[RMDB]
RNA sequence: GGGAACGACUCGAGUAGAGUCGAAAAACAAGGAGUGGUGCCUCCCGCUGGAGACGCAUCCGAAGCUGGCUGACAUGCUGGUCAACCGCGUCAAGGCGCCGACCAAGAACCGUCACUUCGUUGCCAGUGCAAAUAUGCGGUUCGCCGCAUAUUUGCAAAAAGAAACAACAACAACAAC
Reactivity to DMS in 0.01 (KOAc 150mM, MgCl2 10mM, bicine 150mM(pH8.5), 24C), signal-to-noise 2, nucleotides 027 to 126: a080c100a090a140g000g000a070g040u000g000g030u000g000c030c030u000c010c020c180g020c100u010g000g010a150g010a060c070g000c030a070u010c070c060g000a030a090g000c130u000g030g000c000u000g030a080c140a140u010g030c190u000g010g010u000c020a050a110c300c050g010c040g030u000c170a080a150g010g000c010g010c140c070g040a050c050c040a000a070g000a030a120c150c100g000u030c030a040c130u000u000c060g010u000u020g000c030c040a090g010
Reactivity to 2A3 in 0.01 (KOAc 150mM, MgCl2 10mM, bicine 150mM(pH8.5), 24C), signal-to-noise 1, nucleotides 027 to 126: a000c110a070a070g010g000a060g110u140g030g020u030g040c000c000u010c000c010c030g090c140u170g000g000a040g010a000c110g000c010a030u040c010c020g010a020a010g010c040u000g020g000c020u020g020a030c000a070u230g010c000u000g000g030u020c000a020a040c040c040g000c040g070u060c090a080a120g070g010c010g040c020c050g060a010c050c010a030a010g050a060a040c030c010g020u020c010a020c100u140u070c090g100u050u060g000c000c020a030g000